[RMDB]
Source: RMDB library OK1LIB, as collected in RNAgym. Chemical mapping of a 177-nucleotide RNA with 2A3 and DMS. The reactions ran in a buffer of 150 mM KOAc, 10 mM MgCl2 and 150 mM bicine (pH 8.5), at 24 C.
RNA sequence: GGGAACGACUCGAGUAGAGUCGAAAAUGGUGUUAAGUGGAAUAAGUGGAAAAAUAUACAUAUAUGUACAGGGGGCUACAUAUAUGUAUAUGCCCCCUCGUUUCAGUAUAAGUAGGUAUAAGGUGGAACUGCAUAAAUUAUUCGUAAUUUAUGCAGUAAAAGAAACAACAACAACAAC
Reactivity to 2A3 in 0.01 (KOAc 150mM, MgCl2 10mM, bicine 150mM(pH8.5), 24C), signal-to-noise 6, nucleotides 027 to 126: u090g040g030u070g020u130u100a140a080g060u070g030g060a060a070u090a110a050g050u120g020g050a100a090a040a090a000u030a000u010a010c010a000u030a000u000a010u020g010u010a020c090a100g000g010g000g090g010c020u020a000c000a000u070a000u020a010u060g020u010a000u000a000u010g000c000c000c010c000c000u020c010g010u010u030u030c020a010g030u050a020u010a160a020g060u070a010g090g000u050a080u030a140a020g050g020u060g010g050a030
Reactivity to DMS in 0.01 (KOAc 150mM, MgCl2 10mM, bicine 150mM(pH8.5), 24C), signal-to-noise 6, nucleotides 027 to 126: u010g010g010u010g010u010u010a050a110g020u010g010g000a060a040u010a060a070g020u010g000g000a020a080a050a100a030u010a030u000a020c000a040u000a030u000a020u000g000u000a020c080a100g020g000g000g010g010c120u000a030c030a010u010a030u010a020u020g010u000a010u010a010u010g010c140c020c010c020c010u000c030g010u000u010u010c030a060g010u020a040u020a040a070g010u010a040g010g010u010a060u020a050a060g000g010u010g000g010a100